[RMDB]
RNA sequence: GGGAACGACUCGAGUAGAGUCGAAAAAAAAAGGCACUUCAGGUGGCUCUGGGGCGAAAGUACUGACGACAGACCAGAAGCGGCAAGCCGUUGAGUUUAUGUGUGAUGCGACCGGUCUGUCGAAAAAGGAGUAAAAUAUGUUCGCAUAUUUUACUCCAAAAGAAACAACAACAACAAC
Reactivity to 2A3 in 0.01 (KOAc 150mM, MgCl2 10mM, bicine 150mM(pH8.5), 24C), signal-to-noise 3, nucleotides 027 to 126: a000a000a020a020a020g040g010c030a010c020u040u030c020a030g040g020u020g050g010c040u020c050u080g010g010g010g010c020g010a050a020a000g030u040a040c020u050g070a010c000g000a000c000a010g000a000c010c000a000g010a060a020g070c040g060g020c050a030a030g040c020c020g060u070u120g090a220g080u100u190u090a150u090g110u030g040u070g050a140u180g010c000g020a010c000c000g000g000u000c000u000g010u000c000g010a010a000a000a000a000
Reactivity to DMS in 0.01 (KOAc 150mM, MgCl2 10mM, bicine 150mM(pH8.5), 24C), signal-to-noise 3, nucleotides 027 to 126: a060a020a070a080a110g000g000c010a020c070u000u000c070a040g020g000u010g000g000c040u000c030u000g000g010g000g010c170g010a040a030a030g010u010a120c090u000g030a160c000g000a020c000a010g000a020c010c010a060g010a090a200g020c010g030g000c040a030a140g010c010c030g010u000u010g000a090g010u000u000u000a040u010g010u000g030u000g000a120u010g020c040g000a260c060c010g010g010u000c000u000g010u000c000g000a000a030a040a080a070

Record summary
This 177-nucleotide RNA was probed chemically with 2A3 and DMS. The data come from the RNA Mapping Database (RMDB), library M2PK90. For DMS the reverse transcriptase was MarathonRT. Conditions: 150 mM KOAc, 10 mM MgCl2 and 150 mM bicine (pH 8.5), 24 C. The 2A3 profile rests on 3,569 reads. The DMS profile rests on 2,890 reads.